This 207-nucleotide RNA was probed chemically with 2A3. The reactions ran in a buffer of 150 mM KOAc, 10 mM MgCl2 and 150 mM bicine (pH 8.5), at 24 C. It was measured as part of the RMDB library OK3TST. 2A3 adducts were read by reverse transcription with SuperScript II with manganese. For 2A3, 745 sequencing reads were counted.
[RMDB]
RNA sequence: GGGAACGACUCGAGUAGAGUCGAAAAACUCUCACCAGCUACGGUACUGUAGCUGAUUCUCGAGGAGUAGUGUCCCAGACUCAGGACACGAGUCUGGCUAGUACUGAACUAGCAGUACUCCUGGAGUACAGUACCGUACUCCAGCGAGAGUGAGAGAGAUACUGCACCCUUUCGAGGGUGCAGUAUCAAAAGAAACAACAACAACAAC
Reactivity to 2A3 in 0.01 (KOAc 150mM, MgCl2 10mM, bicine 150mM(pH8.5), 24C), signal-to-noise 1, nucleotides 027 to 156: a000c000u000c000u010c010a000c000c000a040g010c050u030a000c000g020g020u010a010c020u000g050u020a030g060c180u070g020a150u120u060c010u000c020g170a000g000g010a000g010u020a050g090u000g080u080c030c000c000a010g010a050c020u010c040a000g100g070a030c070a040c250g010a000g040u000c010u000g020g030c000u030a000g030u070a110c080u110g090a170a030c000u060a040g000c000a010g070u000a000c000u000c000c000u040g110g000a000g020u000a000c000a000g020u020a000c000c000g000u000a000c050u130c040c040a070g000c050g030a160g000a000g060u000g000a010g000a000g000a010